[RMDB]
RNA sequence: GGGAACGACUCGAGUAGAGUCGAAAAUUCACAAGGGAGAUCUUCUCGGGCAUUGGGUAUUUCGCAAUAUUUCUGGGGAAAGAGUCCGUGCUGAACCUUUAUAUGCGGCGGAUGCCAUUCAUCCCUCGUAGAGUUAGUACUUCGGUACUAACUCUACAAAAGAAACAACAACAACAAC
Reactivity to DMS in 0.01 (KOAc 150mM, MgCl2 10mM, bicine 150mM(pH8.5), 24C), signal-to-noise 4, nucleotides 027 to 126: u010u010c110a100c150a130a090g000g000g010a060g010a060u010c070u000u010c020u000c050g000g010g020c070a050u000u000g010g010g000u010a070u000u000u010c080g010c110a080a060u000a050u000u000u000c090u000g010g000g000g000a070a090a070g010a130g010u000c070c100g020u010g010c040u000g000a190a130c090c040u000u000u000a050u000a090u020g020c150g000g030c050g000g010a030u000g020c050c050a080u000u000c080a110u000c000c000c010u000c170
Reactivity to 2A3 in 0.01 (KOAc 150mM, MgCl2 10mM, bicine 150mM(pH8.5), 24C), signal-to-noise 3, nucleotides 027 to 126: u110u050c030a050c000a100a040g010g020g010a060g020a030u020c020u090u030c030u080c000g030g020g010c040a080u080u080g050g030g000u080a160u030u200u110c060g000c080a080a060u010a070u140u120u040c090u060g000g000g000g040a060a070a070g020a010g040u010c060c040g070u080g040c030u020g040a080a080c000c000u040u120u090a150u020a020u130g050c020g020g000c010g060g000a020u030g000c000c010a020u060u060c020a030u000c000c000c000u000c020